[RMDB]
RNA sequence: GGGAACGACUCGAGUAGAGUCGAAAAGGGAUCUGCGAAAUCGCACAAGUCAGGUGGUCGAUGCGGUCAAGGCCGGGGUGCCGGUGACUCUCACGGUACACGGGGAGCCGGUCGCCGAUAUCGUGCCUCUGUGCAUGAUGUUCGCAUCAUGCACAGAAAAAGAAACAACAACAACAAC
Reactivity to 2A3 in 0.01 (KOAc 150mM, MgCl2 10mM, bicine 150mM(pH8.5), 24C), signal-to-noise 2, nucleotides 027 to 126: g130g020g010a040u050c030u090g000c020g020a090a090a100u190c060g020c020a050c030a080a120g080u130c030a020g070g080u050g070g050u110c020g010a020u030g000c010g010g000u050c100a110a100g050g000c020c020g020g000g010g030u090g020c060c010g030g010u020g020a080c030u060c020u050c080a120c070g010g050u090a090c090a020c090g030g000g000g000a000g040c030c010g040g020u020c050g010c040c000g020a040u020a020u060c020g030u070g020c000c010
Reactivity to DMS in 0.01 (KOAc 150mM, MgCl2 10mM, bicine 150mM(pH8.5), 24C), signal-to-noise 3, nucleotides 027 to 126: g010g000g000a060u000c060u000g000c040g040a030a070a060u000c050g020c030a050c070a080a100g000u000c130a040g020g010u000g010g030u000c020g000a050u020g020c060g010g000u000c160a110a090g010g000c020c010g020g000g010g000u000g010c010c000g000g010u000g000a130c090u000c070u000c080a090c040g020g010u010a030c060a080c120g010g010g000g050a300g010c010c020g010g010u010c020g010c020c010g020a090u010a050u010c030g010u010g010c030c030